Source: RMDB library OK2TST, as collected in RNAgym. The record gives the reactivity of an RNA of 177 nucleotides to 2A3 and DMS. For DMS the reverse transcriptase was MarathonRT. For DMS, 1,749 sequencing reads were counted.
RNA sequence: GGGAACGACUCGAGUAGAGUCGAAAACGCGGCCUCCGGUACGAGCUCCACGCGCCACACGCUAAACGCGUAGAGAGUGUCAAUCUGGUUGAAUGGCGCCGCUCCAGCCCUGGCUCUGCUGAUGUUAGAUCAGUGCAGGAUUCGUCCUGCACUGAUCAAAAGAAACAACAACAACAAC
Reactivity to 2A3 in 0.01 (KOAc 150mM, MgCl2 10mM, bicine 150mM(pH8.5), 24C), signal-to-noise 2, nucleotides 027 to 126: c040g020c010g060g000c050c000u030c020c000g000g000u020a020c060g030a020g020c000u040c000c020a030c010g030c010g000c030c010a110c020a030c050g010c020u090a160a060a040c020g030c010g010u060a060g020a000g010a000g080u030g250u120c050a030a060u040c020u080g080g020u120u160g100a060a090u110g110g000c060g000c020c020g030c000u000c030c010a040g000c000c000c050u040g040g010c000u040c030u050g030c030u070g040a100u140g110u140u190a070
Reactivity to DMS in 0.01 (KOAc 150mM, MgCl2 10mM, bicine 150mM(pH8.5), 24C), signal-to-noise 2, nucleotides 027 to 126: c140g010c050g020g000c020c020u000c070c030g010g000u020a060c300g010a210g010c040u000c020c030a070c030g030c020g020c030c040a120c090a080c120g010c090u010a030a130a160c120g000c020g010u000a070g000a110g030a060g040u000g000u020c090a120a220u010c020u000g010g000u010u000g000a120a120u000g000g000c060g000c000c080g040c030u000c000c090a110g000c070c030c020u000g000g010c030u010c070u000g000c020u000g000a070u000g000u010u000a110